[RMDB]
RNA sequence: GGGAACGACUCGAGUAGAGUCGAAAAGAUAUGGACACUGACAUGCUCCGUGGGUUAGCUCGGAAACGAGCACAACCUUAUCGGAGCAACAGCAGUGUCCUAAGUCAAACUGGUCUUCGGACCAGAACUAUCUGUUGUACUUCGGUACAACAGAUAGAAAAGAAACAACAACAACAAC
Reactivity to 2A3 in 0.01 (KOAc 150mM, MgCl2 10mM, bicine 150mM(pH8.5), 24C), signal-to-noise 4, nucleotides 027 to 126: g030a040u080a040u180g010g000a000c010a000c020u020g120a100c030a110u040g010c000u000c000c000g010u040g000g000g000u010u040a030g000c010u000c010g030g030a060a090a070c020g010a010g000c010a060c050a020a010c000c000u130u190a240u220c010g000g000a000g000c000a010a000c000a000g010c000a000g000u010g000u000c010c000u000a000a000g000u000c010a000a050a160c010u000g000g030u010c000u060u080c300g100g010a000c010c000a000g000a020a030
Reactivity to DMS in 0.01 (KOAc 150mM, MgCl2 10mM, bicine 150mM(pH8.5), 24C), signal-to-noise 4, nucleotides 027 to 126: g000a050u010a300u010g010g000a020c010a000c000u000g010a070c080a220u000g000c010u000c000c000g030u000g010g010g000u000u000a140g010c000u000c010g020g000a100a090a190c010g010a020g010c010a060c170a010a010c000c000u000u010a110u000c000g000g000a010g010c010a000a020c200a080g000c010a010g000u000g000u000c000c000u010a010a060g010u000c030a100a130a260c000u000g000g000u000c010u000u010c190g020g010a010c000c010a010g000a090a180